[RMDB]
RNA sequence: GGGAACGACUCGAGUAGAGUCGAAAAUAUUAAAUACCCCGUGUACAUGAACUUAUAAGACGAGUACAACGUAUGGUACAUCACAAGUAUCUUAUUAGUUUUUAAGUACCAUGUGUACAUAGACUUAUGAGACGAGUACAUCGUAUGGUACAUGUAACUAUUCUACCAUCUUCGGAUGGUAGAAUAGAAAAGAAACAACAACAACAAC
Reactivity to 2A3 in 0.01 (KOAc 150mM, MgCl2 10mM, bicine 150mM(pH8.5), 24C), signal-to-noise 3, nucleotides 027 to 156: u070a010u070u250a110a080a060u150a080c010c010c000c020g000u010g020u000a030c020a050u060g080a300a020c010u040u000a010u010a040a000g030a040c030g030a010g030u000a010c030a110a010c170g000u170a050u050g000g000u000a010c010a080u120c060a090c020a200a080g070u090a140u050c020u070u120a160u140u120a120g090u050u020u020u070u170a170a030g010u000a010c000c000a000u050g020u000g010u000a000c000a040u270a040g020a020c000u060u000a010u000g020a000g030a020c040g020a020g000u020a040c010a090u040c040g000u050a020u170g000g000u020a030c000a060u060g010u050a070a050
Annotation
An RNA of 207 nucleotides, treated with 2A3 and read out base by base. High 2A3 reactivity points to a flexible backbone, as in loops and unpaired stretches. The reactions ran in a buffer of 150 mM KOAc, 10 mM MgCl2 and 150 mM bicine (pH 8.5), at 24 C.